Notes:
The record gives the reactivity of an RNA of 207 nucleotides to 2A3 and DMS. 2A3 adducts were read by reverse transcription with SuperScript II with manganese. Values are in units of 0.01, from 0 to 300, in steps of 10. It was measured as part of the RMDB library OK3TST. For DMS, 2,676 sequencing reads were counted.
RNA sequence: GGGAACGACUCGAGUAGAGUCGAAAAUGAUCCAUCACACAGGGCCGACAGUAAACACUGUUCUACUGACGAGUAGCAACAAGCGGGGGUGAAUUGGGGUGAAACGGAGUCUCCGAUUGCUCCGUUCGUCGGCUUGCCCGGAAGGGCGACCGCGAGACCUGUAUCAUGGAUUCGUCCAUGAUACAGGAAAAGAAACAACAACAACAAC
Reactivity to 2A3 in 0.01 (KOAc 150mM, MgCl2 10mM, bicine 150mM(pH8.5), 24C), signal-to-noise 2, nucleotides 027 to 156: u120g010a050u030c020c020a060u150c070a030c010a000c000a110g030g000g000c020c040g050a020c030a060g050u170a040a120a000c050a020c130u060g040u050u000c030u030a020c000u070g110a050c040g070a010g030u010a030g030c110a020a060c000a040a040g070c070g030g000g000g020g010u060g040a040a040u060u010g000g000g010g030u150g050a100a060a010c030g070g020a050g020u010c030u010c030c040g080a080u000u140g000c000u010c010c000g000u020u010c000g050u000c020g000g000c010u000u040g000c000c000c000g080g010a030a170g020g000g010c040g000a040c010c010g030c030g030a010g060a060
Reactivity to DMS in 0.01 (KOAc 150mM, MgCl2 10mM, bicine 150mM(pH8.5), 24C), signal-to-noise 2, nucleotides 027 to 156: u050g020a140u010c000c020a030u000c060a090c060a070c050a210g060g020g020c040c010g040a080c050a120g000u020a130a150a110c100a080c060u010g020u020u000c020u010a030c060u010g000a240c120g030a200g030u000a060g020c090a030a120c020a050a090g010c110g030g000g000g070g030u010g010a060a050u000u010g000g010g000g030u000g000a060a040a040c040g000g020a110g010u010c030u000c050c070g020a170u000u000g010c010u000c000c040g020u000u000c040g010u000c010g060g050c010u000u000g030c020c000c000g020g040a090a170g030g000g050c000g000a000c010c010g000c020g000a150g000a110